[RMDB]
RNA sequence: GGGAACGACUCGAGUAGAGUCGAAAAGCGUCGGUGGCUGUUCUGCGUGUCGAACGAACACAUGUCUAUUUCUUCGUCUGCCCAAGAAUUCGUGUUUGGGUAGACACGCUCGCGGCCCGAAGUGUGGGGACCAAGUCGCCUUCGGGCGACUUGGUCCAAAAGAAACAACAACAACAAC
Reactivity to 2A3 in 0.01 (KOAc 150mM, MgCl2 10mM, bicine 150mM(pH8.5), 24C), signal-to-noise 1, nucleotides 027 to 126: g130c030g080u030c000g040g070u170g120g010c000u060g000u120u290c010u210g020c000g020u000g000u100c060g080a120a000c010g070a030a000c000a000c000a020u150g140u020c010u060a150u010u030u040c020u110u040c050g110u000c120u090g070c040c050c000a000a030g010a030a130u120u220c120g000u000g020u010u040u000g040g000g040u000a000g000a000c040a000c000g010c010u010c080g010c000g000g020c000c000c000g010a060a030g070u150g090u100g020g080
This 177-nucleotide RNA was probed chemically with 2A3.
Conditions: 150 mM KOAc, 10 mM MgCl2 and 150 mM bicine (pH 8.5), 24 C.
For 2A3, 438 sequencing reads were counted.
It was measured as part of the RMDB library OK1LIB.